[RMDB]
RNA sequence: GGGAACGACUCGAGUAGAGUCGAAAAGCGUACUACUCCUGAGGCUAAAGAGGUAACAUUGAUCAUCCCAAAUAGGAUGAUACAUGUUACUACCCACCUUUAGCUACCCACCAGGAGUAUCGCAAAAGGAUUCGUAGUCUUCGGACUACGAAUCCAACAAUUGGCAAGGCUUCGGCCUUGCCAAUUGAAAAGAAACAACAACAACAAC
Reactivity to 2A3 in 0.01 (KOAc 150mM, MgCl2 10mM, bicine 150mM(pH8.5), 24C), signal-to-noise 1, nucleotides 027 to 156: g000c000g040u130a040c040u000a000c000u010c000c020u010g010a040g010g000c000u020a000a000a000g010a010g010g000u000a000a000c000a000u060u300g000a030u010c000a000u030c050c050c020a070a230a210u290a090g000g000a000u000g000a000u120a110c000a000u000g020u000u010a020c000u020a030c060c000c050a120c000c000u000u000u000a000g000c030u000a020c020c000c020a160c000c030a000g000g080a010g020u020a020u050c010g000c000a000a000a080a280g030g000a000u000u010c000g000u000a000g000u030c000u070u080c280g150g000a030c000u000a000c000g010a000a000u000c000c020a020a000